[RMDB]
RNA sequence: GGGAACGACUCGAGUAGAGUCGAAAAGAUAACGUAUCACCCCUCGUUGUGUAAACAUCGUCCAUUUAUUGCCUGGACGGAUCGUGUACAGUGGCAGAGCAAUCCCGCACAUUUACAGGCCUGGCAGAGAAACUGGUAUAUUCGUAUACCAGUUUCUAAAAGAAACAACAACAACAAC
Reactivity to 2A3 in 0.01 (KOAc 150mM, MgCl2 10mM, bicine 150mM(pH8.5), 24C), signal-to-noise 2, nucleotides 027 to 126: g010a050u130a130a060c080g050u070a060u140c010a090c010c000c000c000u020c030g060u040u110g040u030g020u110a080a060a030c010a040u030c020g030u010c020c020a020u030u130u180a240u210u240g090c030c030u040g000g030a010c030g010g000a050u060c060g020u020g020u030a030c010a030g030u060g050g030c020a010g000a010g070c000a050a050u050c000c000c010g050c010a060c010a080u090u110u140a090c040a020g000g060c000c010u040g020g010c010a010g020
Reactivity to DMS in 0.01 (KOAc 150mM, MgCl2 10mM, bicine 150mM(pH8.5), 24C), signal-to-noise 8, nucleotides 027 to 126: g010a090u000a070a110c140g010u010a100u000c060a180c050c010c010c100u010c070g010u000u000g010u000g000u010a060a070a050c100a040u010c030g000u000c010c010a060u000u000u010a100u020u010g000c120c110u000g000g000a030c020g020g010a020u000c120g020u000g000u000a040c060a050g010u000g010g010c030a060g010a080g000c080a070a100u000c010c010c020g020c100a060c080a060u010u010u010a070c090a090g000g010c020c040u000g000g010c070a090g010